[RMDB]
Background:
This 207-nucleotide RNA was probed chemically with 2A3.
RNA sequence: GGGAACGACUCGAGUAGAGUCGAAAAGCGUACUACGACGUGUUGCUGCAUCGAUCUCAUAAUCUUCGCUUCCCAAAUAGGAAGCGAACUAUGAGGGAGCAGCAAUACGUCGUAUCGCAAACGAUUCUAAUUAGGAUUCGUCCUAAUUAGAAUCGAACCUAAUCAUCGCCUUCGGGCGAUGAUUAGGAAAAGAAACAACAACAACAAC
Reactivity to 2A3 in 0.01 (KOAc 150mM, MgCl2 10mM, bicine 150mM(pH8.5), 24C), signal-to-noise 1, nucleotides 027 to 156: g000c000g030u120a050c020u020a000c010g020a000c000g010u020g000u000u000g000c000u010g000c020a170u260c110g080a080u020c000u000c000a040u010a090a100u090c090u020u020c000g000c000u000u030c020c020c000a090a190a220u160a110g020g000a000a000g010c000g020a000a000c000u000a000u000g000a000g000g040g000a010g000c000a000g000c000a000a000u000a000c000g020u000c000g000u010a000u000c000g000c000a050a000a000c010g010a000u010u000c000u000a000a000u000u000a010g000g030a020u020u100c210g060u080c100c010u020a010a010u000u000a000g020a000a000u010c000g000a000a000